[RMDB]
RNA sequence: GGGAACGACUCGAGUAGAGUCGAAAAACCAGAACGCUGGGAUACUUGAUACUGGCUAGGGCCGUAGCGUCGUUCACUUCUGCCACAUCCAAGUCGUCUGCGUUGCUCAGACCGUAAGGGGUGACCUUGCACAUUUGUCGACCCAUGCGAGGGAUGAGCAACGCUCCUGCUUCGGCAGGAGCGUUGCAAAAGAAACAACAACAACAAC
Reactivity to 2A3 in 0.01 (KOAc 150mM, MgCl2 10mM, bicine 150mM(pH8.5), 24C), signal-to-noise 1, nucleotides 027 to 156: a010c030c000a000g040a050a000c080g010c080u080g000g030g080a080u070a160c020u030u140g000a040u030a030c010u100g000g010c050u040a060g070g040g000c000c030g010u030a040g030c070g080u010c010g020u130u030c040a080c170u030u010c030u120g000c010c000a040c000a020u030c040c000a000a050g020u090c060g040u030c070u070g010c010g040u060u140g000c000u010c050a000g050a050c000c050g100u100a080a230g010g020g010g010u040g050a010c020c020u040u140g100c120a100c010a230u090u140u140g040u000c010g100a080c020c050c010a000u180g050c030g020a080g020g000g080a050u050g030a000